[RMDB]
RNA sequence: GGGAACGACUCGAGUAGAGUCGAAAAGGUGCGAAUCACUGAUUGGUCUAAUCCUAGUCAUUCUGUGUUCAAUGAGGCAUUCUCAUUAAGCCAAGCUCGGCUACGAUCAGGUGGGUUGCCGCUGUUAAGUGUCUGUAGCAUUCGUGCUGCAGGCGCUAAAAGAAACAACAACAACAAC
Reactivity to 2A3 in 0.01 (KOAc 150mM, MgCl2 10mM, bicine 150mM(pH8.5), 24C), signal-to-noise 9, nucleotides 027 to 126: g080g010u090g030c030g040a050a030u080c010a010c030u030g020a100u090u090g030g020u020c030u070a070a080u100c010c020u020a010g040u040c030a090u180u040c080u080g120u020g020u110u060c040a020a020u030g010a020g050g040c150a180u300u060c020u000c000a010u020u030a040a010g010c010c010a030a010g020c020u030c050g020g000c010u030a030c060g020a030u030c010a010g050g050u030g010g040g010u030u040g040c030c020g010c030u040g040u110u100a080
Reactivity to DMS in 0.01 (KOAc 150mM, MgCl2 10mM, bicine 150mM(pH8.5), 24C), signal-to-noise 9, nucleotides 027 to 126: g010g020u010g010c050g010a070a060u020c020a040c020u000g000a130u030u010g010g000u010c040u010a110a090u020c030c030u010a040g010u010c060a090u020u010c090u010g010u030g020u010u000c060a030a030u000g010a030g010g020c250a130u030u030c000u000c000a020u000u010a050a070g000c020c020a060a110g010c070u010c090g000g000c030u000a060c170g000a030u010c040a040g000g010u000g000g000g000u000u010g000c040c030g000c040u000g010u010u020a060

Chemical mapping of a 177-nucleotide RNA with 2A3 and DMS. The 2A3 profile rests on 153,120 reads. 2A3 adducts were read by reverse transcription with SuperScript II with manganese. The reactions ran in a buffer of 150 mM KOAc, 10 mM MgCl2 and 150 mM bicine (pH 8.5), at 24 C. Values are in units of 0.01, from 0 to 300, in steps of 10. For DMS, 150,576 sequencing reads were counted.